[RMDB]
RNA sequence: GGGAACGACUCGAGUAGAGUCGAAAACAACCAGGACACUCAAUGAAAACUUAGCCACAUGUUGGGCACUGUUUCUCACACUUGUUCUGCAAACAACUGAAUUGUCUCCCAAAUGGUGGCAGCCCUCGGUCUGUAAGACUUUCGAGUCUUACAGACCAAAAGAAACAACAACAACAAC
Reactivity to 2A3 in 0.01 (KOAc 150mM, MgCl2 10mM, bicine 150mM(pH8.5), 24C), signal-to-noise 2, nucleotides 027 to 126: c000a010a010c080c000a030g020g040a020c030a000c030u080c070a070a210u050g040a080a020a070a000c050u050u040a030g030c040c000a000c020a080u210g040u190u090g140g020g040c030a070c060u020g030u020u010u050c140u000c010a090c000a000c090u030u040g010u070u060c050u050g110c110a000a090a130c020a010a050c030u080g040a040a140u110u070g050u060c030u080c060c020c000a050a030a040u080g040g000u020g010g030c070a040g050c000c000c020u030c030
Reactivity to DMS in 0.01 (KOAc 150mM, MgCl2 10mM, bicine 150mM(pH8.5), 24C), signal-to-noise 1, nucleotides 027 to 126: c090a050a160c100c040a020g010g020a050c040a100c040u000c100a120a030u010g010a070a040a120a040c030u020u010a040g010c030c030a010c020a060u000g010u020u020g000g000g060c300a080c080u000g000u000u000u000c110u000c060a100c110a090c180u000u000g000u010u000c030u000g030c150a020a180a040c000a040a050c100u000g010a050a090u000u000g010u000c040u000c000c000c000a080a070a030u030g020g050u000g010g000c020a080g010c040c000c000u000c160